[RMDB]
The record gives the reactivity of an RNA of 177 nucleotides to 2A3 and DMS.
2A3 adducts were read by reverse transcription with SuperScript II with manganese.
It was measured as part of the RMDB library OK2TRN.
Conditions: 150 mM KOAc, 10 mM MgCl2 and 150 mM bicine (pH 8.5), 24 C.

RNA sequence: GGGAACGACUCGAGUAGAGUCGAAAACAAAGCCACCUGCUCAUUACACCUAUUGUGUUUGCUAUCUUGAGGAUGGACCAGAUUGUUCUACAACAGACAAGGUGGCACAAUCAACUAUCCGCUGGGAUAGUCAAGCAUUGUUCGCAAUGCUUGACUAAAAAGAAACAACAACAACAAC
Reactivity to 2A3 in 0.01 (KOAc 150mM, MgCl2 10mM, bicine 150mM(pH8.5), 24C), signal-to-noise 2, nucleotides 027 to 126: c020a010a070a000g040c010c000a000c000c010u020g000c020u050c050a070u100u190a070c020a040c030c060u180a140u200u250g030u030g000u070u060u080g000c000u020a050u100c030u030u140g080a050g030g020a050u070g030g060a130c040c030a030g020a080u040u080g020u060u000c010u040a070c020a180a010c020a060g150a030c020a060a070g080g000u000g000g000c000a000c010a000a010u060c000a000a060c000u030a040u050c020c030g000c140u110g040g040g030a030
Reactivity to DMS in 0.01 (KOAc 150mM, MgCl2 10mM, bicine 150mM(pH8.5), 24C), signal-to-noise 4, nucleotides 027 to 126: c080a090a110a100g020c040c030a040c030c020u000g030c070u020c090a070u010u000a080c080a080c090c220u000a090u000u000g010u000g010u000u000u000g000c050u000a060u000c030u010u000g000a170g010g010a040u000g020g020a080c120c100a150g000a040u000u000g000u000u000c010u010a080c050a040a100c150a080g000a110c210a080a090g010g020u000g010g010c030a020c050a020a010u000c050a060a070c030u000a010u000c000c000g000c160u020g020g000g020a090